[RMDB]
RNA sequence: GGGAACGACUCGAGUAGAGUCGAAAAGACUGCGUGCACUUGAGACGAUAUCGAGCCGGAAAUUAAUCGAUAAUGUCUCUGGUAGUGGAUACGAUCCGGCAAGUAUCGACUACUUGUGCUCGUAGGAACUCGUGACGCUGUUCGCAGCGUCACGAGUAAAAGAAACAACAACAACAAC
Reactivity to 2A3 in 0.01 (KOAc 150mM, MgCl2 10mM, bicine 150mM(pH8.5), 24C), signal-to-noise 1, nucleotides 027 to 126: g060a010c020u000g000c000g020u000g030c000a000c000u000u000g000a000g000a000c000g020a040u030a030u120c030g000a090g040c000c000g000g140a080a150a030u270u200a120a010u070c000g000a000u010a090a070u130g040u000c000u000c030u060g110g030u020a020g030u010g060g020a000u000a000c000g000a020u040c010c000g000g000c020a070a030g000u000a000u000c010g090a000c000u160a110c000u000u030g000u000g000c000u000c000g000u020a020g000g000a040